The record gives the reactivity of an RNA of 177 nucleotides to 2A3 and DMS. It was measured as part of the RMDB library TTRINS. The reactions ran in a buffer of 150 mM KOAc, 10 mM MgCl2 and 150 mM bicine (pH 8.5), at 24 C.

RNA sequence: GGGAACGACUCGAGUAGAGUCGAAAAGAUAUGGACUGUGUCGAGUACAAUACAUGGCACGAAGAACGCUUUCGGAAACGAAAGCGGGAGUGUGAGUAUUGUACUAAGACAGCACAGUCCUAAGUCAGAACAAUUUUCAGUUCGCUGAAAAUUGUUCAAAAGAAACAACAACAACAAC
Reactivity to 2A3 in 0.01 (KOAc 150mM, MgCl2 10mM, bicine 150mM(pH8.5), 24C), signal-to-noise 1, nucleotides 027 to 126: g080a000u090a110u180g000g000a000c000u000g000u010g020u300c030g090a020g000u010a000c030a050a000u000a000c060a300u300g200g020c000a010c010g090a100a070g000a020a000c000g030c010u000u030u000c010g020g060a060a120a040c030g000a000a000a000g060c000g080g010g010a060g010u000g000u010g090a070g000u000a000u020u000g000u020a000c000u000a000a010g010a010c010a000g060c010a000c000a000g000u050c010c000u040a080a030g090u000c050a030
Reactivity to DMS in 0.01 (KOAc 150mM, MgCl2 10mM, bicine 150mM(pH8.5), 24C), signal-to-noise 1, nucleotides 027 to 126: g000a130u000a300u000g000g000a000c010u000g000u000g020u000c030g000a000g010u000a000c000a000a000u000a000c020a000u010g030g010c020a000c040g000a100a130g010a170a300c050g010c000u000u000u000c000g030g000a300a050a110c010g000a000a000a000g020c000g000g000g010a070g000u000g030u000g000a170g020u000a000u010u000g010u000a000c000u000a090a080g010a170c300a090g000c050a030c020a000g000u000c000c000u000a000a040g020u000c020a110

The DMS profile rests on 956 reads. High DMS reactivity at an A or C suggests that its Watson-Crick edge is free.